[RMDB]
RNA sequence: GGGAACGACUCGAGUAGAGUCGAAAACGCCGCCUGCUCGUUCCAGCUUCCCCAGCUGGAGGAUGGCAGCGCCUGGAUUCAAGUCACUCCAGCUGGUGAGUUCCGGCCCACGGACGGGCGCCCCAUGGACGUGCCGGCCUGGCGGAUCGAUGCCGCCGGCCUUGGAUAUGUUCGCAUAUCCAAGGCCAAAAGAAACAACAACAACAAC
Reactivity to 2A3 in 0.01 (KOAc 150mM, MgCl2 10mM, bicine 150mM(pH8.5), 24C), signal-to-noise 1, nucleotides 027 to 156: c020g020c010c050g030c000c010u030g000c010u010c030g100u160u040c020c000a000g040c040u110u100c010c000c050c000a010g000c000u050g040g000a010g040g030a160u200g050g020c040a030g050c010g030c020c030u110g020g050a170u160u140c100a140a000g050u020c010a010c040u000c000c000a010g010c000u000g020g010u090g010a050g030u070u080c070c000g060g000c000c050c020a040c040g050g040a040c050g020g000g010c000g040c010c040c000c000a080u100g000g040a000c010g020u040g050c060c060g030g000c010c020u050g000g000c000g000g000a030u130c060g040a010u170g020c010c000g090c060c010